RNA sequence: GGGAACGACUCGAGUAGAGUCGAAAAACGCUCCAGCAAGCAGCGACGAAAGACCGUGUCGAGUCACCGGCACCUGUCGCAACUCCUCCAGUGCCGCAUCGACAUAGGCAACGGUGAGUGCGCCGGCGUGUCUCCGGGAAUUCGUUCCCGGAGACACAAAAGAAACAACAACAACAAC
Reactivity to DMS in 0.01 (KOAc 150mM, MgCl2 10mM, bicine 150mM(pH8.5), 24C), signal-to-noise 2, nucleotides 027 to 126: a080c100g000c020u000c020c040a240g030c080a160a110g000c130a070g000c010g000a050c070g020a150a180a120g010a060c020c100g010u030g010u000c030g020a070g010u000c090a070c170c000g000g000c040a010c030c040u000g000u000c080g000c020a060a050c040u000c020c060u010c000c020a160g000u000g030c030c010g000c160a080u000c150g020a080c090a090u010a070g000g010c040a040a110c000g000g030u000g000a040g000u000g020c070g010c050c040g000g000c220
Chemical mapping of a 177-nucleotide RNA with DMS. The reactions ran in a buffer of 150 mM KOAc, 10 mM MgCl2 and 150 mM bicine (pH 8.5), at 24 C. The data come from the RNA Mapping Database (RMDB), library OK2TRN.